RNA sequence: GGGAACGACUCGAGUAGAGUCGAAAAUUAUCAGAUUCCAUUGUGGUAUCCUGAUAAGGCUGAUGUUACUCAGUGUGUUUAUUCUCAGGUGAUUGCACUGAUAAGACCUUGUAAUAAAUCCUCUGUCUUUUGUGGAAUUAAUUAAACUCUUGUCGUCAUUUAUUCAGAGGUUCGCCUCUGAAUAAAUAAAAGAAACAACAACAACAAC
Reactivity to 2A3 in 0.01 (KOAc 150mM, MgCl2 10mM, bicine 150mM(pH8.5), 24C), signal-to-noise 3, nucleotides 027 to 156: u020u010a020u010c010a000g030a030u060u040c010c010a100u080u290g090u110g090g020u030a070u070c050c040u030g010a010u010a010a020g060g000c060u040g040a050u070g030u190u080a060c040u000c000a010g000u000g000u000g040u120u040u080a080u170u050c090u070c050a040g150g030u060g070a050u060u090g010c000a000c050u040g020a050u040a050a020g020a000c010c040u040u060g060u060a020a070u030a110a190a050u050c010c040u050c030u020g140u150c030u130u140u130u130g040u040g020g040a030a020u080u080a040a050u070u140a120a230a060c010u050c010u100u070g040u080c020g030u030c030
Reactivity to DMS in 0.01 (KOAc 150mM, MgCl2 10mM, bicine 150mM(pH8.5), 24C), signal-to-noise 1, nucleotides 027 to 156: u000u010a050u000c000a070g010a120u010u000c020c000a300u000u010g000u000g010g030u000a040u010c080c060u000g020a050u010a010a060g030g040c060u030g020a170u010g030u000u000a130c180u000c010a050g020u000g020u000g010u010u000u000a050u010u010c040u010c020a260g020g050u000g020a080u000u000g020c000a080c010u010g020a110u000a070a120g010a050c000c030u000u000g000u000a060a130u000a090a060a100u000c030c020u010c020u010g000u000c040u000u000u000u000g020u010g000g010a060a100u000u000a020a160u000u000a080a080a100c060u000c050u000u000g020u000c010g010u000c060
Conditions: 150 mM KOAc, 10 mM MgCl2 and 150 mM bicine (pH 8.5), 24 C. Structure probing data (2A3 and DMS) for a 207-nucleotide construct. Reactivities are rounded to 0.1 and cut off at 0 and 3. The DMS profile rests on 2,760 reads. Source: RMDB library OK3TST, as collected in RNAgym. For DMS the reverse transcriptase was MarathonRT.